[RMDB]
The record gives the reactivity of an RNA of 207 nucleotides to 2A3 and DMS. For DMS the reverse transcriptase was MarathonRT. The data come from the RNA Mapping Database (RMDB), library RSTRND.

RNA sequence: GGGAACGACUCGAGUAGAGUCGAAAAUAAGUGCCGAGAACACUCGCACUGACUUCGCUCUCGCUGCCUGAUCAGUGAUCGAAGGGUCAGCCCGGAUGUAGCCUUCCGUCCGGAUCCUGGCCUCGUUUAGAAGGCUUGCCGUACAGCUGUGGUCACGCGGCAUAAAAGAGUUCGCUCUUUUAUGCCGAAAAGAAACAACAACAACAAC
Reactivity to 2A3 in 0.01 (KOAc 150mM, MgCl2 10mM, bicine 150mM(pH8.5), 24C), signal-to-noise 5, nucleotides 027 to 156: u150a040a000g000u020g120c150c100g030a030g030a200a090c270a100c150u010c000g010c000a020c010u010g040a050c000u010u010c010g000c010u000c000u000c010g000c010u020g010c020c080u140g060a230u180c010a010g010u010g020a060u300c010g000a010a010g010g000g000u010c010a010g010c000c000c000g000g000a010u010g020u030a010g010c000c010u010u000c000c000g010u000c000c000g000g010a040u130c040c010u010g010g000c000c020u050c030g060u030u070u080a020g010a020a000g010g000c000u000u050g020c000c020g070u070a060c030a080g020c050u050g020u040g110g020u040c020a010c120g030
Reactivity to DMS in 0.01 (KOAc 150mM, MgCl2 10mM, bicine 150mM(pH8.5), 24C), signal-to-noise 3, nucleotides 027 to 156: u010a020a030g030u000g020c020c020g020a130g020a110a100c130a050c020u000c020g000c050a050c020u000g010a040c020u000u000c020g000c010u000c030u000c060g010c030u000g010c040c050u010g010a080u010c010a040g010u010g010a070u010c020g030a070a050g000g000g020u000c000a040g020c110c000c000g000g010a010u000g010u000a050g000c030c020u010u000c060c010g010u000c020c000g010g010a020u000c100c010u000g020g010c020c020u010c080g010u010u000u000a070g000a060a070g090g030c010u000u000g000c030c050g010u000a140c140a130g020c030u000g010u000g000g010u010c050a150c180g010